[RMDB]
RNA sequence: GGGAACGACUCGAGUAGAGUCGAAAAUGCCUAAGGAGGGGUGAACCGGCCCAGGUCGGAAACGGAGCAGGUCAAAACUCCCGUGCUGAUCAGUAGUGGGAUCGCGCCUGUGAAUAGCCACUGCACUCUUUGUACUCGUCUUCGGACGAGUACAAAGAAAAGAAACAACAACAACAAC
Reactivity to 2A3 in 0.01 (KOAc 150mM, MgCl2 10mM, bicine 150mM(pH8.5), 24C), signal-to-noise 2, nucleotides 027 to 126: u030g060c010c000u010a040a050g110g010a030g020g020g000g020u060g040a100a050c000c010g020g050c000c020c030a020g030g100u000c010g020g020a140a070a020c020g050g010a050g050c070a020g000g060u110c020a010a090a040a050c080u040c000c030c000g000u080g020c040u110g000a090u040c040a040g030u070a010g090u070g030g010g000a030u040c010g000c020g000c030c000u060g040u020g040a050a100u080a020g010c010c000a050c000u000g000c010a020c070u040
Reactivity to DMS in 0.01 (KOAc 150mM, MgCl2 10mM, bicine 150mM(pH8.5), 24C), signal-to-noise 1, nucleotides 027 to 126: u000g000c030c000u000a130a130g000g000a100g000g000g030g120u000g000a040a080c080c040g090g070c010c000c190a020g000g030u020c000g000g080a160a120a020c070g020g010a020g000c020a030g020g070u000c160a080a060a140a200c060u000c010c030c000g000u000g000c110u080g000a000u000c080a140g010u000a030g000u020g030g000g000a050u000c080g000c090g040c000c000u000g000u000g000a160a200u000a130g010c000c000a130c000u000g000c020a210c160u020